[RMDB]
RNA sequence: GGGAACGACUCGAGUAGAGUCGAAAACGCCGCCCAAGCCCGAACUGAGCCAAGUCCGAGCGAAGGGUCCGCGUGGGGAGGAAACGCAACCCGAGAGUGAGAUGAACGACAAGGGGCGAAGAUCCUCGUAGACCUGAGUUCGCUCAGGUCAAAAGAAACAACAACAACAAC
Reactivity to 2A3 in 0.01 (KOAc 150mM, MgCl2 10mM, bicine 150mM(pH8.5), 24C), signal-to-noise 9, nucleotides 027 to 129: c020g030c020c030g030c010c000c010a040a040g030c010c020c000g030a040a020c040u030g010a010g080c040c030a100a010g020u010c010c000g010a010g010c000g010a050a030g030g010g010u040c020c030g030c020g020u070g010g020g010g020a020g010g000a030a040a000c040g000c050a080a090c010c010c010g030a020g000a000g050u110g020a070g010a120u150g050a090a020c030g060a020c060a070a070g010g010g000g000c010g000a040a010g050a050u030c010c010u010c010g030u030a050
Reactivity to DMS in 0.01 (KOAc 150mM, MgCl2 10mM, bicine 150mM(pH8.5), 24C), signal-to-noise 9, nucleotides 027 to 129: c060g010c030c110g000c000c000c000a090a290g040c040c020c010g020a040a030c130u030g030a090g040c010c080a030a040g020u030c020c010g000a060g040c060g010a060a060g000g000g000u020c020c080g030c120g000u050g000g000g000g000a020g000g050a030a070a060c110g000c070a130a070c070c010c000g000a150g000a050g000u000g010a090g030a100u070g010a070a030c070g000a080c130a070a100g000g000g000g000c090g000a080a070g000a120u000c050c000u010c010g000u050a050

Chemical mapping of a 170-nucleotide RNA with 2A3 and DMS. For 2A3 the reverse transcriptase was SuperScript II with manganese. The reactions ran in a buffer of 150 mM KOAc, 10 mM MgCl2 and 150 mM bicine (pH 8.5), at 24 C. The 2A3 profile rests on 32,764 reads.